[RMDB]
RNA sequence: GGGAACGACUCGAGUAGAGUCGAAAAAGAGAUGGUUAAACUCUGGUCCCAUUUUCAAGACUCUCCAUCUGCGUGGGACUAAUUAGGAGAGAAAGAGUGAUGUGACAUGUCCAUAUGAGAGAUGUGGCAGCCUUGUGCUGUCAUACUCACCGGAGAACAUACCGAUCCGAUUCGUCGGAUCGGUAUGAAAAGAAACAACAACAACAAC
Reactivity to 2A3 in 0.01 (KOAc 150mM, MgCl2 10mM, bicine 150mM(pH8.5), 24C), signal-to-noise 3, nucleotides 027 to 156: a010g060a000g020a060u150g100g000u120u120a050a110a040c000u000c000u020g010g000u000c010c020c010a010u080u070u030u100c070a020a050g000a050c000u040c000u030c020c010a100u030c060u100g090c050g060u080g010g040g000a010c030u040a100a040u110u120a110g030g050a050g000a000g070a030a080a000g050a020g030u110g020a090u020g050u020g050a040c040a140u070g050u020c000c020a050u080a090u230g120a100g000a000g040a080u050g000u010g000g000c000a010g000c030c000u160u210g160u260g060c000u000g000u000c000a000u010a000c000u000c020a080c030c020g040g030a030g060a040a010
Reactivity to DMS in 0.01 (KOAc 150mM, MgCl2 10mM, bicine 150mM(pH8.5), 24C), signal-to-noise 2, nucleotides 027 to 156: a060g000a060g030a090u010g020g000u000u000a110a090a130c020u000c030u000g010g000u050c010c000c000a140u000u000u000u000c060a120a120g000a210c010u000c020u000c000c030a170u010c050u000g100c160g030u010g020g010g020a100c040u000a060a150u010u030a070g030g000a080g000a070g020a070a060a100g010a080g010u000g000a110u000g010u000g000a070c040a080u010g040u000c030c030a100u010a130u010g010a170g000a080g010a200u000g040u000g010g010c000a010g000c000c030u000u010g060u010g020c000u000g020u000c000a000u010a000c020u000c010a100c040c070g000g000a110g000a070a300